RNA sequence: GGGAACGACUCGAGUAGAGUCGAAAAACGCUGAACAAGUGACGCUUGAAAAUAUUCAUCAUUUGCAUGAAAAUGAUUUAAAGCCAGAUGAAGUUGCAGCAAAUGCACAAAAUAAUGCAUCAAAUACCACCUCUGUGGUAUUCGUACCACAGAGGUGAAAAGAAACAACAACAACAAC
Reactivity to DMS in 0.01 (KOAc 150mM, MgCl2 10mM, bicine 150mM(pH8.5), 24C), signal-to-noise 3, nucleotides 027 to 126: a140c190g000c000u000g000a080a040c000a070a290g020u000g000a140c300g000c010u000u010g010a090a070a080a040u000a090u000u010c020a010u010c000a150u020u010u010g000c160a030u000g000a010a030a100a090u010g010a090u010u010u010a100a040a020g010c020c100a080g020a070u000g010a100a130g020u010u000g000c000a030g000c020a080a060a030u000g010c000a030c120a040a100a110a090u020a060a160u010g000c000a060u000c100a050a060a080u000a120c240
Reactivity to 2A3 in 0.01 (KOAc 150mM, MgCl2 10mM, bicine 150mM(pH8.5), 24C), signal-to-noise 3, nucleotides 027 to 126: a010c050g000c010u040g010a040a010c000a200a040g060u040g110a020c060g000c030u020u020g090a040a020a080a080u160a060u040u070c010a010u010c000a030u100u120u200g080c020a020u030g020a020a000a050a050u060g030a040u040u030u120a120a020a000g000c020c010a060g030a230u070g020a120a060g060u050u090g160c000a010g000c020a110a100a000u030g040c110a020c030a050a150a050a030u290a090a050u070g000c010a010u040c060a040a140a090u090a080c010